An RNA of 207 nucleotides, treated with DMS and 2A3 and read out base by base. Conditions: 150 mM KOAc, 10 mM MgCl2 and 150 mM bicine (pH 8.5), 24 C. Values cover nucleotides 27 to 156. It was measured as part of the RMDB library OK3TST.
RNA sequence: GGGAACGACUCGAGUAGAGUCGAAAACAGACGGCUGGAGAAAGAGAAUGUGGUGCAUAUACACGAUGGAGUACUAUUCAGCCAUGAAAAAGUGUAAAAUUGUGCCCUUUGCAGGAACGUGGAUGGAACGGGAGAACAUAGUGCUGAGUCAAACAGAAGUGCCUAAUAUCUUCGGAUAUUAGGCACUAAAAGAAACAACAACAACAAC
Reactivity to DMS in 0.01 (KOAc 150mM, MgCl2 10mM, bicine 150mM(pH8.5), 24C), signal-to-noise 2, nucleotides 027 to 156: c030a120g000a080c060g020g000c050u010g000g020a120g020a080a080a130g000a170g010a110a080u000g060u000g010g020u010g010c010a080u010a160u000a050c000a000c040g020a090u000g050g000a200g030u000a090c080u000a200u010u020c070a190g010c020c020a100u020g010a050a060a100a080a110g020u000g010u010a010a030a060a200u020u000g010u010g010c020c000c020u000u010u000g000c040a070g030g020a060a030c030g010u010g040g020a100u010g040g000a000a060c000g000g050g030a100g000a070a040c030a110u000a080g020u000g020c060u000g010a070g000u000c030a000a050a050c100a120g010a080
Reactivity to 2A3 in 0.01 (KOAc 150mM, MgCl2 10mM, bicine 150mM(pH8.5), 24C), signal-to-noise 1, nucleotides 027 to 156: c040a000g130a080c040g030g010c020u030g000g030a020g050a050a120a010g110a010g030a090a080u150g040u080g020g010u020g000c000a000u020a010u040a040c000a000c030g020a010u060g000g030a030g040u050a100c040u020a090u060u050c030a010g000c010c010a000u040g010a000a080a020a010a010g040u030g010u120a050a080a120a140u120u060g000u040g020c000c000c020u040u090u110g040c020a020g000g050a060a020c040g020u030g000g030a040u020g000g000a050a020c000g010g020g000a030g030a020a010c030a040u100a090g040u060g050c030u010g020a020g050u120c070a130a030a030c010a020g080a180